[RMDB]
RNA sequence: GGGAACGACUCGAGUAGAGUCGAAAAACAAGAAUGUUCGCAUUCUUGUACGCAAUCCUAAGUCAGCAACAGCUACUCGCUUGGACCCUAUCGGAAACGAUAGGCUAGCGAGGGACAUGCUGAUAUGGAAGAACAAACCAGGGUUCGCCCUGGUUAAUAGAACGGGAUUAUUCGUAAUCCCGUUCUAAAAAGAAACAACAACAACAAC
Reactivity to DMS in 0.01 (KOAc 150mM, MgCl2 10mM, bicine 150mM(pH8.5), 24C), signal-to-noise 2, nucleotides 027 to 156: a030c010a020a000g000a000a020u020g000u010u030c300g030c010a010u000u000c000u010u000g000u000a090c090g020c110a100a210u030c000c000u000a050a300g020u000c050a010g020c030a000a040c210a090g020c010u000a090c000u000c000g000c020u000u030g010g030a130c170c020c020u000a030u000c000g010g000a140a140a180c020g000a010u000a010g040g000c020u010a010g050c000g030a010g030g020g000a100c050a300u000g010c000u010g020a030u000a300u000g000g030a040a110g000a160a130c090a060a070a030c000c000a040g000g020g030u010u000c290g030c010c010c010u000g010g000u000u000a010a050
Reactivity to 2A3 in 0.01 (KOAc 150mM, MgCl2 10mM, bicine 150mM(pH8.5), 24C), signal-to-noise 3, nucleotides 027 to 156: a000c000a000a000g000a000a010u020g010u130u200c210g000c160a000u000u000c000u000u000g000u020a040c150g020c080a050a110u050c000c010u030a110a000g020u020c000a000g000c010a030a070c010a170g060c030u160a240c010u140c010g020c000u050u130g060g140a170c040c010c000u000a000u000c010g040g000a110a040a030c000g000a000u000a000g000g000c000u010a000g010c000g000a000g000g000g010a030c010a030u040g000c000u000g000a000u010a010u030g040g000a050a110g050a120a050c120a130a040a000c010c010a010g000g000g030u050u040c150g150c030c000c000u020g000g000u030u030a010a030
Conditions: 150 mM KOAc, 10 mM MgCl2 and 150 mM bicine (pH 8.5), 24 C. Chemical mapping of a 207-nucleotide RNA with DMS and 2A3. The 2A3 profile rests on 2,515 reads. Source: RMDB library RNAMAK, as collected in RNAgym.